[RMDB]
RNA sequence: GGGAACGACUCGAGUAGAGUCGAAAAAGUUGUAUUUUGAUACUUUGCACGUGCUUUCAUACCUUGAGGUAAAUUCUCAGUAUCAAAAGUAAUGCGUGACAUUAAUGUCGUUAUGUCUUUAUCCGACGGUAAGAGACUGGUUCGCCAGUCUCUUACCAAAAGAAACAACAACAACAAC
Reactivity to DMS in 0.01 (KOAc 150mM, MgCl2 10mM, bicine 150mM(pH8.5), 24C), signal-to-noise 1, nucleotides 027 to 126: a070g000u000u000g000u010a070u010u020u000u000g000a020u000a020c040u000u020u000g000c140a030c300g000u000g030c000u000u010u040c190a040u000a080c190c160u010u000g000a050g020g030u000a060a040a150u000u000c000u000c020a030g010u000a000u000c060a020a000a000a030g000u040a040a090u000g000c100g020u000g030a040c000a070u000u000a080a100u000g010u000c050g000u000u000a020u000g000u000c010u000u000u000a120u000c100c060g040a260c210
Background: An RNA of 177 nucleotides, treated with DMS and read out base by base. The RNA was probed in 150 mM KOAc, 10 mM MgCl2 and 150 mM bicine (pH 8.5) at 24 C. Source: RMDB library OK2TST, as collected in RNAgym.